[RMDB]
RNA sequence: GGGAACGACUCGAGUAGAGUCGAAAAAAUAGGGUCUGUCCUUGUUAAUGAGCCAGCCUGCUCAUACUAUGUUUGGAGUCUCAUUUACAAAACCUAUUGAUGGGAGUUAUGCUCUAAUUAGCGUAAGCUAACGUGUCGUGUUCGCACGACACGUUAGAAAAGAAACAACAACAACAAC
Reactivity to DMS in 0.01 (KOAc 150mM, MgCl2 10mM, bicine 150mM(pH8.5), 24C), signal-to-noise 5, nucleotides 027 to 126: a030a020u000a030g010g010g010u010c110u010g010u010c070c040u010u000g010u000u000a010a030u000g010a040g030c060c050a100g020c060c030u000g010c030u000c100a080u000a110c170u010a050u010g010u000u000u000g010g010a180g010u000c020u000c030a030u000u010u000a050c080a040a040a070a100c040c020u000a090u010u000g000a110u010g000g000g020a070g000u000u020a040u010g000c020u010c120u000a050a090u000u010a030g010c040g020u010a060a080g010
Reactivity to 2A3 in 0.01 (KOAc 150mM, MgCl2 10mM, bicine 150mM(pH8.5), 24C), signal-to-noise 3, nucleotides 027 to 126: a000a020u090a030g000g010g020u030c040u060g170u030c020c040u020u010g050u030u050a080a010u030g010a010g000c000c010a060g070c060c010u030g040c000u050c090a060u120a120c090u140a080u210g150u090u250u080g040g010a040g090u000c010u010c020a030u040u080u030a070c020a030a050a030a090c010c000u040a040u080u060g050a090u060g020g060g000a060g020u040u030a060u140g010c010u010c020u050a110a210u080u130a010g030c040g070u030a090a000g050